Source information
Structure probing data (2A3 and DMS) for a 207-nucleotide construct. DMS adducts were read by reverse transcription with MarathonRT. The reactions ran in a buffer of 150 mM KOAc, 10 mM MgCl2 and 150 mM bicine (pH 8.5), at 24 C. The 2A3 profile rests on 972 reads.

[RMDB]
RNA sequence: GGGAACGACUCGAGUAGAGUCGAAAAGAGGUAACUGUAAACCGUGAGGUUACUACAGAUAACCCAUACACGAUCUCAGUAACCAACAAAACACUUUCGGCAAUCCGUAUCAAAAUGUUUAUGCCUCGCGGCGUACGAAUUGAAAGCAACGGUGAUACAAGACAGAAUCGUUCGCGAUUCUGUCUUGAAAAGAAACAACAACAACAAC
Reactivity to 2A3 in 0.01 (KOAc 150mM, MgCl2 10mM, bicine 150mM(pH8.5), 24C), signal-to-noise 2, nucleotides 027 to 156: g100a030g020g000u040a070a030c040u010g050u130a130a010a080c000c010g010u010g010a040g000g000u020u000a040c000u050a060c050a000g060a090u070a070a050c020c010c020a020u120a040c060a000c040g070a080u040c010u000c050a000g000u050a060a060c040c030a020a070c040a030a130a030a010c070a050c060u050u130u130c070g030g000c040a010a060u000c030c030g030u060a050u110c070a000a010a130a110u110g120u070u140u120a060u100g000c010c000u050c060g020c040g000g000c000g000u050a020c010g030a050a090u090u160g030a100a060a000g010c010a070a000c040g010g010u020g020a050u070a120
Reactivity to DMS in 0.01 (KOAc 150mM, MgCl2 10mM, bicine 150mM(pH8.5), 24C), signal-to-noise 1, nucleotides 027 to 156: g000a090g000g020u000a100a170c000u010g000u000a060a010a010c010c000g010u000g080a300g000g000u050u000a000c010u000a030c150a120g010a090u000a060a050c090c000c060a280u000a300c050a040c210g080a060u000c050u000c030a010g060u000a130a130c030c010a060a140c250a170a060a120a100c060a040c010u000u000u000c000g100g040c050a080a030u000c060c000g000u000a010u000c130a000a060a130a060u010g000u010u000u000a060u000g040c140c030u000c180g040c300g000g100c050g100u000a060c030g000a040a010u010u030g010a050a100a040g000c060a110a050c050g000g010u000g000a100u000a100
Values cover nucleotides 27 to 156. 2A3 is a SHAPE reagent: it acylates the 2'-hydroxyl of flexible nucleotides of all four kinds. For DMS, 1,007 sequencing reads were counted.